[RMDB]
Conditions: 150 mM KOAc, 10 mM MgCl2 and 150 mM bicine (pH 8.5), 24 C.
This 207-nucleotide RNA was probed chemically with DMS and 2A3.
2A3 adducts were read by reverse transcription with SuperScript II with manganese.
RNA sequence: GGGAACGACUCGAGUAGAGUCGAAAACGUUUGGCUUCGCGUCCCACGUCCUCAACCAGUUAAUCUGGAACGGGAGUUUGUAUCUUGUCUCUACAUAUUCGGGAACGGUACAACCUGGGCCCCCAGAGACUUCCAAAUCGUAUACAGGGAUCAUGACUGUACGAUAAAAAUUCGUUUUUAUCGUACAAAAAGAAACAACAACAACAAC
Reactivity to DMS in 0.01 (KOAc 150mM, MgCl2 10mM, bicine 150mM(pH8.5), 24C), signal-to-noise 3, nucleotides 027 to 156: c040g010u000u020u010g010g030c040u000u000c050g040c040g000u000c000c000c020a150c090g000u000c010c010u000c040a140a300c020c010a040g010u000u000a070a140u000c010u000g000g010a060a160c170g020g020g000a090g020u010u000u010g020u000a040u000c030u000u000g010u010c020u010c020u000a210c090a130u000a150u000u000c100g010g020g000a080a090c060g020g020u000a030c030a030a090c050c040u000g010g030g020c020c020c040c040c070a110g010a100g010a050c020u000u000c040c030a040a130a070u000c070g040u010a140u000a100c050a090g020g020g030a100u000c050a090u000g010a190c110
Reactivity to 2A3 in 0.01 (KOAc 150mM, MgCl2 10mM, bicine 150mM(pH8.5), 24C), signal-to-noise 5, nucleotides 027 to 156: c020g000u020u020u100g040g010c050u110u100c080g010c020g050u050c020c000c000a020c030g110u050c000c010u050c020a070a080c020c010a020g010u010u130a100a080u120c000u020g010g030a050a040c070g020g020g010a020g000u020u060u090g010u020a040u020c020u050u210g080u020c010u000c000u050a160c060a300u230a200u160u280c060g040g000g000a050a040c040g020g000u030a000c010a040a040c020c040u050g030g040g030c020c020c010c000c010a000g010a000g000a110c000u060u000c040c000a040a130a120u100c040g020u040a030u020a100c020a010g100g010g010a070u150c070a090u130g040a060c110
For DMS, 6,172 sequencing reads were counted.